[RMDB]
RNA sequence: GGGAACGACUCGAGUAGAGUCGAAAAUUGGCAUUUAGUCGAGGGUGAACUAUUGGUGCAAGACUUACGCUUAAAUAAGCUCCUGCAUUGGUCUGAUCAAACCAUAUGCUACAAGGAUAGUGUGUUUACAUCUGAACGUUCGCGUUCAGAAAAAGAAACAACAACAACAAC
Reactivity to DMS in 0.01 (KOAc 150mM, MgCl2 10mM, bicine 150mM(pH8.5), 24C), signal-to-noise 6, nucleotides 027 to 129: u010u010g030g030c010a100u040u040u010a150g040u000c050g030a110g030g030g050u010g030a020a010c060u000a000u020u020g020g040u000g000c010a050a050g020a000c020u000u000a040c110g000c030u000u010a000a070a150u060a040a040g000c090u000c050c030u000g030c040a060u040u000g020g000u040c040u020g040a070u030c170a080a130a040c030c010a050u100a030u000g020c030u060a050c220a050a060g000g000a070u020a070g000u040g020u030g000u010u040u000a050c080a060
Reactivity to 2A3 in 0.01 (KOAc 150mM, MgCl2 10mM, bicine 150mM(pH8.5), 24C), signal-to-noise 7, nucleotides 027 to 129: u050u010g020g010c030a010u030u030u170a070g010u060c030g040a060g020g050g010u040g020a030a030c040u050a080u080u110g050g010u000g010c010a040a040g080a050c010u040u040a040c050g020c030u060u090a050a060a070u180a110a000g000c000u020c000c010u010g020c000a010u000u020g010g000u010c050u050g060a210u090c090a020a030a020c000c000a020u030a020u220g050c000u040a070c060a070a040g060g010a040u050a160g090u110g000u000g010u080u030u020a040c020a080